[RMDB]
RNA sequence: GGGAACGACUCGAGUAGAGUCGAAAAGAUAUGGACAAGUAGAAAUUUCACCAUGUGGACAUGUCAUUGUCUCGGAAACGAGACAAAUGACAACAGCCACGGUGAAAUUUCUACUUGUCCUAAGUCACUUUGACUAGAUGUUCGCAUCUAGUCAAAGAAAAGAAACAACAACAACAAC
Reactivity to DMS in 0.01 (KOAc 150mM, MgCl2 10mM, bicine 150mM(pH8.5), 24C), signal-to-noise 1, nucleotides 027 to 126: g010a010u000a300u020g000g020a020c000a000a010g030u000a010g000a010a010a050u000u010u000c000a010c020c000a290u040g040u000g000g030a060c120a270u000g000u000c000a010u000u000g000u000c010u010c000g000g000a100a080a170c010g030a010g000a030c000a010a000a020u000g010a010c000a000a040c160a240g000c030c000a000c000g000g040u000g000a010a000a010u000u000u000c000u000a000c000u000u010g000u000c000c000u000a010a060g000u010c030a210

This 177-nucleotide RNA was probed chemically with DMS. Values cover nucleotides 27 to 126. Values are in units of 0.01, from 0 to 300, in steps of 10.